An RNA of 177 nucleotides, treated with 2A3 and DMS and read out base by base. For DMS the reverse transcriptase was MarathonRT. For 2A3 the reverse transcriptase was SuperScript II with manganese.
[RMDB]
RNA sequence: GGGAACGACUCGAGUAGAGUCGAAAAAGUCUAAAGGGUCCGUAGCCGGCUUUGCAAGUCCCCUGGGAAAUCCAGCGGCUUAACCGUUGGGCUUUCAUGGGAUACUACAUUGCUUGGGACUGGGAGAAAUACACGCUACUUUCGAGUAGCGUGUAUUAAAAGAAACAACAACAACAAC
Reactivity to 2A3 in 0.01 (KOAc 150mM, MgCl2 10mM, bicine 150mM(pH8.5), 24C), signal-to-noise 4, nucleotides 027 to 126: a000g050u030c040u090a100a080a090g100g010g050u020c030c020g060u040a020g090c010c000g000g000c000u040u020u010g010c020a010a000g040u050c020c010c000c000u040g020g040g010a040a040a020u020c000c000a000g020c010g030g000c060u170u220a120a130c010c000g000u000u000g000g000g010c020u020u040u000c000a010u020g000g000g010a010u010a010c000u000a000c010a030u000u030g010c010u160u270g030g020g020a080c010u010g000g030g010a060g070a010
Reactivity to DMS in 0.01 (KOAc 150mM, MgCl2 10mM, bicine 150mM(pH8.5), 24C), signal-to-noise 3, nucleotides 027 to 126: a070g000u010c060u010a090a160a120g010g010g010u000c040c020g040u020a100g000c050c070g010g000c020u000u020u000g030c030a000a010g000u000c070c010c010c050u030g000g020g010a000a020a060u010c010c000a000g000c000g000g020c130u060u040a130a260c010c000g010u000u000g020g000g000c090u000u020u010c010a030u010g000g000g000a030u000a020c000u020a300c000a030u010u000g010c010u000u010g000g000g000a090c040u030g030g000g000a080g010a110